RNA sequence: GGGAACGACUCGAGUAGAGUCGAAAAGCUGCCUCUGACGUCCUUAAGGGUGGUAAAGCGGGUCUCCCCCGGAAACCGGGACGCGCCUGGCGCUCGCACGGGUAUGCGUGGAGGUCGACCCUGGCCGGAGCGGUAUAGCAUUCGUGCUAUACCGCUCAAAAGAAACAACAACAACAAC
Reactivity to DMS in 0.01 (KOAc 150mM, MgCl2 10mM, bicine 150mM(pH8.5), 24C), signal-to-noise 2, nucleotides 027 to 126: g010c030u010g030c030c000u000c020u000g020a080c050g010u000c010c020u000u010a110a230g010g000g020u000g000g020u000a050a140a160g000c060g010g010g000u010c020u000c030c080c010c020c030g030g000a030a060a100c140c070g020g010g000a030c010g010c070g010c020c020u010g010g000c020g010c050u010c030g000c090a130c210g020g000g050u020a050u010g000c040g000u000g010g010a060g000g020u000c070g000a040c020c000c010u000g010g010c050c100g000
Reactivity to 2A3 in 0.01 (KOAc 150mM, MgCl2 10mM, bicine 150mM(pH8.5), 24C), signal-to-noise 1, nucleotides 027 to 126: g010c010u020g040c030c020u000c040u040g040a050c030g030u110c010c010u020u070a070a050g060g020g010u030g030g000u070a120a000a020g000c040g080g010g040u010c030u060c000c000c020c010c000g070g190a200a070a040c090c010g010g030g000a010c020g040c010g000c070c010u070g050g000c080g000c020u050c040g060c030a050c080g030g000g140u160a070u290g020c020g010u020g020g010a030g060g000u050c120g070a150c000c000c010u060g070g000c020c060g070